[RMDB]
RNA sequence: GGGAACGACUCGAGUAGAGUCGAAAAGAUAUGGACGGAAUUGUCGUAUUCCCUAUGUGGGAGCUAUCACUCGGAAACGAGUGUUAGCGAAGAACACACGGGAAUACGACAAUUCCGUCCUAAGUCACGAUGAACUUGAGUUCGCUCAAGUUCAUCGAAAAGAAACAACAACAACAAC
Reactivity to DMS in 0.01 (KOAc 150mM, MgCl2 10mM, bicine 150mM(pH8.5), 24C), signal-to-noise 1, nucleotides 027 to 126: g010a080u010a300u000g010g050a030c000g030g010a020a000u000u000g010u000c000g040u000a000u020u020c010c000c020u000a130u030g000u010g000g000g010a220g010c000u000a000u000c020a000c000u000c000g030g020a140a120a300c030g000a040g040u000g010u000u000a020g010c000g000a060a070g000a080a250c000a020c000a080c300g050g000g000a000a000u000a000c000g000a010c010a000a000u000u000c000c030g020u010c000c000u010a000a010g020u000c010a160